[RMDB]
RNA sequence: GGGAACGACUCGAGUAGAGUCGAAAAGCUUAAUAACCUGCGCUGAGCCGUUCUCCCCCAGCUUGCCUGUGUCCUAGGGAAUUGGAAGGUCAUCCUUCACAGGAUCGUGUGGAAGUCCUGCUCGGGGUCCAAACAUGGUAAUUCGUUACCAUGUUAACCCCUGUUAACUAUUCGUAGUUAACAGGGGAAAAGAAACAACAACAACAAC
Reactivity to DMS in 0.01 (KOAc 150mM, MgCl2 10mM, bicine 150mM(pH8.5), 24C), signal-to-noise 1, nucleotides 027 to 156: g030c110u000u000a100a170u000a060a060c000c010u010g010c000g030c020u020g010a020g040c000c010g000u000u010c010u010c000c040c000c020c020a100g020c050u000u010g000c030c010u010g020u000g010u000c030c020u000a110g020g010g030a090a130u000u010g010g030a060a080g020g020u000c080a100u000c000c010u000u000c090a070c040a030g010g010a040u010c050g010u000g020u000g040g010a150a130g020u000c000c010u000g000c020u000c060g020g000g000g010u000c050c030a110a020a030c000a000u010g010g030u000a010a080u000u000c220g040u000u000a000c000c000a000u000g010u000u010a040a120
Reactivity to 2A3 in 0.01 (KOAc 150mM, MgCl2 10mM, bicine 150mM(pH8.5), 24C), signal-to-noise 4, nucleotides 027 to 156: g020c040u140u160a110a030u180a090a130c030c020u010g010c070g050c110u120g000a010g000c000c000g010u030u010c050u060c020c000c000c010c010a020g000c040u040u090g020c010c020u050g010u010g030u080c030c050u030a040g020g040g050a070a080u090u100g050g020a060a000g030g030u110c020a060u110c040c000u040u040c020a020c000a050g050g020a030u070c090g030u040g000u040g120g020a050a010g020u010c000c010u010g020c010u000c030g010g000g000g010u050c020c030a000a080a000c000a000u000g000g000u000a020a010u050u010c020g010u020u020a000c000c000a000u000g000u000u020a020a010